Chemical mapping of a 177-nucleotide RNA with 2A3 and DMS. The 2A3 profile rests on 2,627 reads. It was measured as part of the RMDB library OK2TST. The DMS profile rests on 2,320 reads.
RNA sequence: GGGAACGACUCGAGUAGAGUCGAAAACGUGUUGACAUGCGUAUCCUCGAUCAUCAUCGCAUAAUCGAGAACGGUCAUAUCCGACAUGCCGCCGGAGCGAUGGCGCGCAUCGAGAUAGUCGCGGAAACUCAUGAUCAGCUUUCGAGCUGAUCAUGAGAAAAGAAACAACAACAACAAC
Reactivity to 2A3 in 0.01 (KOAc 150mM, MgCl2 10mM, bicine 150mM(pH8.5), 24C), signal-to-noise 2, nucleotides 027 to 126: c050g000u090g040u110u070g080a060c050a080u140g000c030g010u020a040u050c050c020u000c030g000a020u000c010a010u000c000a010u100c040g030c110a040u090a100a040u140c030g000a010g020a210a060c010g000g060u100c010a010u010a020u060c050c020g060a070c080a070u080g000c010c000g010c010c000g020g010a110g070c050g050a030u070g020g030c070g000c060g000c060a010u000c030g070a110g020a060u040a060g080u060c010g010c020g100g010a080a080a010
Reactivity to DMS in 0.01 (KOAc 150mM, MgCl2 10mM, bicine 150mM(pH8.5), 24C), signal-to-noise 3, nucleotides 027 to 126: c110g030u000g000u000u000g010a150c160a120u020g050c020g030u000a070u000c160c000u000c000g010a010u000c040a050u010c020a140u000c160g010c090a050u010a030a030u000c000g000a070g010a060a080c010g030g020u000c040a160u010a070u000c060c050g000a080c190a080u000g000c090c060g000c010c000g000g010a140g030c110g020a060u010g000g030c140g010c220g000c050a020u000c030g010a090g000a030u010a090g010u000c010g030c060g010g000a130a120a110